[RMDB]
RNA sequence: GGGAACGACUCGAGUAGAGUCGAAAACUAUGAUGGCAUCAGUGCAUUCCAGCCUGACCAAUGGAACAGGACCCUGCCAAGAAAGAGAGAGAGAAAGGGAGGAAGGAACGAAAGGAAGGAAGGAAGGGAACAGAGCCAUUUUCGAAUGGCUCUGUUCAAAAGAAACAACAACAACAAC
Reactivity to DMS in 0.01 (KOAc 150mM, MgCl2 10mM, bicine 150mM(pH8.5), 24C), signal-to-noise 1, nucleotides 027 to 126: c030u010a060u020g000a090u020g000g020c020a080u000c060a040g020u000g040c040a160u000u000c090c100a120g000c000c030u000g000a050c070c040a050a150u000g000g010a070a060c170a060g000g020a070c030c080c020u000g040c020c020a060a090g000a070a080a070g020a000g000a060g000a040g030a150g000a030a060a100g020g010g000a080g000g000a020a050g000g010a060a070c100g010a060a130a110g000g000a020a000g020g020a050a070g010g010a050a040g000g020
Reactivity to 2A3 in 0.01 (KOAc 150mM, MgCl2 10mM, bicine 150mM(pH8.5), 24C), signal-to-noise 1, nucleotides 027 to 126: c030u020a100u300g040a040u090g000g030c050a040u010c070a040g090u050g160c010a060u090u060c020c030a000g050c010c000u050g020a080c000c020a030a120u090g060g020a060a070c040a060g040g020a030c000c000c010u010g010c030c000a020a020g070a030a080a000g100a000g010a000g000a000g010a000g040a040a050a010g050g030g020a000g060g000a020a030g010g000a040a020c020g060a050a040a030g000g040a040a040g000g020a020a040g070g010a030a030g070g030